Record summary:
This 177-nucleotide RNA was probed chemically with 2A3 and DMS. The RNA was probed in 150 mM KOAc, 10 mM MgCl2 and 150 mM bicine (pH 8.5) at 24 C. Source: RMDB library VIROID, as collected in RNAgym.
RNA sequence: GGGAACGACUCGAGUAGAGUCGAAAAAAGUUUCUUCUUGACUGAGCCAGUCAUGGUAAACAAAACCUUGCUUUCCUGUCUUCCUUUUGUGACAGAAGAGUUAUCCUUAGUGAUAACUACAGGUGCAUCUAUACUACCUCUUCGGAGGUAGUAUAGAAAAAGAAACAACAACAACAAC
Reactivity to 2A3 in 0.01 (KOAc 150mM, MgCl2 10mM, bicine 150mM(pH8.5), 24C), signal-to-noise 3, nucleotides 027 to 126: a000a000g010u040u000u000c040u110u020c030u030u030g030a050c040u050g040a040g190c090c030a010g060u020c010a010u070g070g030u100a110a090a040c060a030a090a030a040c010c000u020u100g030c040u110u120u060c010c000u000g000u020c040u080u100c010c040u080u230u190u250g160u070g030a030c020a050g040a030a010g030a030g000u010u000a000u020c000c020u080u080a050g030u090g270a000u010a020a000c000u000a020c020a000g020g020u030g050c000a040
Reactivity to DMS in 0.01 (KOAc 150mM, MgCl2 10mM, bicine 150mM(pH8.5), 24C), signal-to-noise 5, nucleotides 027 to 126: a060a060g010u000u000u000c030u010u010c050u000u000g010a040c020u010g000a180g010c170c070a040g010u000c020a020u010g010g010u010a040a040a070c160a090a070a070a080c030c020u000u000g010c050u000u010u010c070c000u000g010u000c050u000u010c080c060u000u000u000u010g010u000g000a080c110a030g000a030a060g000a030g010u000u000a000u000c000c010u010u010a100g010u020g000a000u000a010a000c010u000a060c060a030g010g010u000g010c080a110

The DMS profile rests on 5,739 reads.